[RMDB]
RNA sequence: GGGAACGACUCGAGUAGAGUCGAAAACGUAGAUACUUCGGUAUCUACGAAAAUAACGGUGGCGUGGGACACAGCCGGAGCUAGCCUCGGAUAGUCUCAGUAAAACAGCAUGGUUCGCCAUGCUGAAGAGGUACUUCAUGUUCGCAUGAAGUACCUCAAAAGAAACAACAACAACAAC
Reactivity to 2A3 in 0.01 (KOAc 150mM, MgCl2 10mM, bicine 150mM(pH8.5), 24C), signal-to-noise 2, nucleotides 027 to 126: c010g000u000a010g010a030u010a000c020u020u030c280g080g030u000a000u000c000u000a000c000g000a000a000a000a000u090a050a020c060g090g070u110g040g000c080g000u090g000g050g000a000c020a000c050a120g010c020c000g040g000a020g020c050u120a040g040c000c000u010c040g000g030a040u070a100g030u030c020u000c060a020g080u120a010a170a020a030c000a000g030c000a000u000g000g030u020u070c150g020c070c010a010u000g000c000u000g000a000a020
Reactivity to DMS in 0.01 (KOAc 150mM, MgCl2 10mM, bicine 150mM(pH8.5), 24C), signal-to-noise 2, nucleotides 027 to 126: c020g020u000a030g000a000u000a000c000u000u000c170g040g000u000a010u000c000u000a000c000g000a040a030a000a100u000a120a190c110g020g040u000g000g040c120g010u000g010g020g020a030c030a080c130a150g000c010c010g020g000a040g000c100u000a110g020c060c030u010c070g010g000a060u010a090g000u020c000u000c010a050g010u010a030a060a120a160c000a000g010c000a030u000g000g000u000u020c190g020c000c000a000u000g000c000u000g020a030a010
The record gives the reactivity of an RNA of 177 nucleotides to 2A3 and DMS. The RNA was probed in 150 mM KOAc, 10 mM MgCl2 and 150 mM bicine (pH 8.5) at 24 C. For 2A3, 2,288 sequencing reads were counted. The DMS profile rests on 1,445 reads. 2A3 adducts were read by reverse transcription with SuperScript II with manganese.